The data come from the RNA Mapping Database (RMDB), library OK2TST. This 177-nucleotide RNA was probed chemically with DMS.

RNA sequence: GGGAACGACUCGAGUAGAGUCGAAAAGUGGGCUCAGUACAGGCAGCGAAGAUCCAUUCCAGUAUAGGCAAUAUGAGGCAUCCCGUCAAUCGAGAGAUGUCCUUGGCGGUAAAUCAAAACCCAACAACUAAUCCUCAUCCUUCGGGAUGAGGAUUAGAAAAGAAACAACAACAACAAC
Reactivity to DMS in 0.01 (KOAc 150mM, MgCl2 10mM, bicine 150mM(pH8.5), 24C), signal-to-noise 2, nucleotides 027 to 126: g030u000g020g010g030c030u010c080a080g040u010a080c100a090g000g000c050a080g000c060g040a080a110g000a060u020c030c000a110u000u010c050c010a070g010u000a050u000a080g020g000c100a080a130u010a050u000g030a080g010g010c000a080u000c050c010c020g000u000c120a090a080u040c110g020a140g000a130g010a060u000g000u000c010c040u000u010g000g030c110g000g010u000a000a070a050u020c110a070a060a080a120c010c000c030a060a080c190a090a190
Annotation: For DMS the reverse transcriptase was MarathonRT.